Record summary:
This 207-nucleotide RNA was probed chemically with 2A3 and DMS. For DMS, 2,508 sequencing reads were counted. It was measured as part of the RMDB library OK3TST. For DMS the reverse transcriptase was MarathonRT. 2A3 adducts were read by reverse transcription with SuperScript II with manganese.

[RMDB]
RNA sequence: GGGAACGACUCGAGUAGAGUCGAAAACAGCUUCUUAGCAAUCUGAAUAUGCAGCCACAACAGGCUAUUUCUCAUAUUUUGCGCGCUUUCAAUGUUACUCCACAGCAGCUUGCUCAGCACAUUAGUGCAGACCCUAAUUCUUACGUGUCGCAGGCACACAAAAUAACCCUUUCGAGGGUUAUUUUGUAAAAGAAACAACAACAACAAC
Reactivity to 2A3 in 0.01 (KOAc 150mM, MgCl2 10mM, bicine 150mM(pH8.5), 24C), signal-to-noise 4, nucleotides 027 to 156: c020a000g030c020u110u080c030u130u250a000g010c020a020a060u060c030u080g030a050a010u050a040u160g040c080a020g010c000c000a100c050a270a110c040a070g020g000c000u020a090u020u080u040c060u040c010a040u060a080u090u070u050u060g060c040g000c000g000c000u060u230u170c090a090a070u080g010u070u080a080c030u030c060c040a060c000a050g050c000a010g020c020u030u080g010c000u040c080a030g060c010a020c010a090u110u240a070g020u040g050c040a010g050a130c000c000c000u030a030a110u120u060c020u050u090a080c080g060u040g030u040c040g020c180a040g040g010c020a010c020
Reactivity to DMS in 0.01 (KOAc 150mM, MgCl2 10mM, bicine 150mM(pH8.5), 24C), signal-to-noise 1, nucleotides 027 to 156: c050a170g030c060u000u000c010u000u000a150g010c010a080a120u000c040u010g000a110a070u000a040u040g000c100a120g020c060c010a090c010a070a130c030a300g000g000c220u010a090u000u000u000c070u010c030a080u000a100u000u010u010u010g000c080g020c210g000c020u010u000u030c030a090a080u010g020u000u010a080c050u000c020c020a080c070a070g050c020a040g000c010u000u000g020c030u000c030a090g040c030a020c020a090u000u020a040g050u000g020c030a090g020a080c030c010c020u020a030a090u010u000c050u000u010a050c090g020u000g010u000c050g030c000a070g000g020c000a070c120